[RMDB]
Chemical mapping of a 207-nucleotide RNA with DMS and 2A3. For 2A3, 1,874 sequencing reads were counted. DMS adducts were read by reverse transcription with MarathonRT. Values cover nucleotides 27 to 156. Conditions: 150 mM KOAc, 10 mM MgCl2 and 150 mM bicine (pH 8.5), 24 C.
RNA sequence: GGGAACGACUCGAGUAGAGUCGAAAAUCUGGAAAGAAUCCUCUAAUUCUAGAGAUUAAAUCAAUUCCAAUCUGAACUCUAGCUCCUGUAAUUAUUACACAUUGAUAUCCCUUCCAAGUAUCAGAUGAGAGAGCUUUCCAUGCUAUGUAACGGAGUAAAGUAGUAUCGAAUUCGUUCGAUACUACUUAAAAGAAACAACAACAACAAC
Reactivity to DMS in 0.01 (KOAc 150mM, MgCl2 10mM, bicine 150mM(pH8.5), 24C), signal-to-noise 2, nucleotides 027 to 156: u000c080u000g040g000a030a050a080g010a170a090u010c050c020u010c020u000a070a130u000u000c080u000a060g010a070g010a200u010u010a020a050a130u000c010a050a160u000u000c050c030a110a080u000c040u000g000a060a100c010u000c020u010a100g030c030u000c010c060u000g010u010a030a070u000u000a070u010u010a090c060a060c060a100u010u010g010a050u000a060u000c020c020c050u020u000c040c100a150a100g020u000a060u000c030a050g010a090u000g020a090g000a170g000a060g000c030u000u000u000c020c000a130u000g000c010u000a110u010g010u000a040a210c060g020g030a100g010u010a060
Reactivity to 2A3 in 0.01 (KOAc 150mM, MgCl2 10mM, bicine 150mM(pH8.5), 24C), signal-to-noise 4, nucleotides 027 to 156: u000c010u010g030g030a010a050a020g030a070a100u070c030c020u010c040u040a130a110u290u030c050u080a030g010a030g010a040u120u120a090a100a100u120c040a030a110u190u050c010c030a030a080u040c050u050g030a070a060c000u020c020u060a020g000c010u030c030c010u040g030u060a110a070u100u190a090u140u140a050c060a010c010a060u040u070g050a040u050a070u170c060c020c000u080u050c090c030a100a030g020u030a060u110c020a020g020a050u050g010a050g010a010g010a010g090c000u010u010u010c010c000a030u070g040c010u110a080u170g040u050a070a030c060g090g020a020g030u120a030